[RMDB]
RNA sequence: GGGAACGACUCGAGUAGAGUCGAAAAAAGGAAUGCAGAGAACAAAGCCGCGGUGGGAGGAAGCUUUGAAAUUUGCAUGGAGGCAUUUGCAGGUAUCCCUGCAUUAACCAUCCCGCUGUAAAGUGCGGACUAUAAGCGCGUUCGCGCGCUUAUAGUCAAAAGAAACAACAACAACAAC
Reactivity to DMS in 0.01 (KOAc 150mM, MgCl2 10mM, bicine 150mM(pH8.5), 24C), signal-to-noise 1, nucleotides 027 to 126: a010a100g000g030a150a030u000g000c040a070g000a080g010a100a180c070a030a060a040g010c040c020g020c130g020g000u000g040g000g000a050g020g010a150a170g000c000u020u010u000g020a040a050a290u010u020u000g000c050a010u000g010g000a110g000g010c050a070u000u010u000g010c000a000g020g000u020a090u040c230c000c000u000g010c020a000u000u000a090a050c040c030a040u000c000c000c000g010c080u020g010u010a090a050a100g000u010g010c120g000
Reactivity to 2A3 in 0.01 (KOAc 150mM, MgCl2 10mM, bicine 150mM(pH8.5), 24C), signal-to-noise 1, nucleotides 027 to 126: a000a000g090g010a040a000u040g010c000a000g020a010g020a160a020c040a020a030a010g020c030c010g040c050g070g070u070g030g040g000a010g050g020a010a040g000c000u030u070u050g100a180a190a040u100u120u030g010c020a000u070g030g020a040g040g040c040a040u000u030u110g000c000a000g040g010u080a150u180c030c000c000u010g000c000a020u000u090a070a010c010c000a030u000c000c030c000g000c020u050g010u110a090a120a070g050u080g030c060g020